Description: Chemical mapping of a 170-nucleotide RNA with DMS and 2A3. Values cover nucleotides 27 to 129. Conditions: 150 mM KOAc, 10 mM MgCl2 and 150 mM bicine (pH 8.5), 24 C. For 2A3 the reverse transcriptase was SuperScript II with manganese. For 2A3, 2,948 sequencing reads were counted.
RNA sequence: GGGAACGACUCGAGUAGAGUCGAAAAUCUUUCUCUUUCGUCGUCAUCCUUGGCUAACCGCUCAAGUUCCUCCUCUUCCUCUCGGCUGAGGUGCUUCCCUCCCGCGGCCAGCUGCUUCUUCUUGUUCGCGACGGCCGCUUCGGCGGCCGUAAAAGAAACAACAACAACAAC
Reactivity to DMS in 0.01 (KOAc 150mM, MgCl2 10mM, bicine 150mM(pH8.5), 24C), signal-to-noise 2, nucleotides 027 to 129: u030c070u030u000u010c020u000c030u000u000u000c070g020u000c100g000u070c010a080u000c060c030u000u000g060g010c020u000a010a120c300c040g030c090u020c130a120a080g010u000u000c010c000u000c000c000u030c040u020u000c020c020u020c050u030c110g000g000c110u040g030a130g020g030u000g030c080u020u060c060c020c010u000c010c010c010g040c070g000g000c040c010a100g010c080u030g010c070u040u010c050u000u030c000u000u000g050u010u040c000g020c030g020
Reactivity to 2A3 in 0.01 (KOAc 150mM, MgCl2 10mM, bicine 150mM(pH8.5), 24C), signal-to-noise 2, nucleotides 027 to 129: u080c020u000u060u020c050u000c010u000u080u050c040g000u000c020g070u020c020a050u030c020c060u010u020g030g000c040u050a040a060c090c030g030c010u070c010a000a080g010u040u080c000c010u010c000c000u030c030u000u000c010c000u050c000u030c000g060g000c000u010g040a040g030g020u020g080c020u030u070c000c010c020u000c000c010c000g000c000g000g000c030c000a030g000c030u020g000c010u020u050c000u060u000c020u030u080g050u050u010c000g020c010g000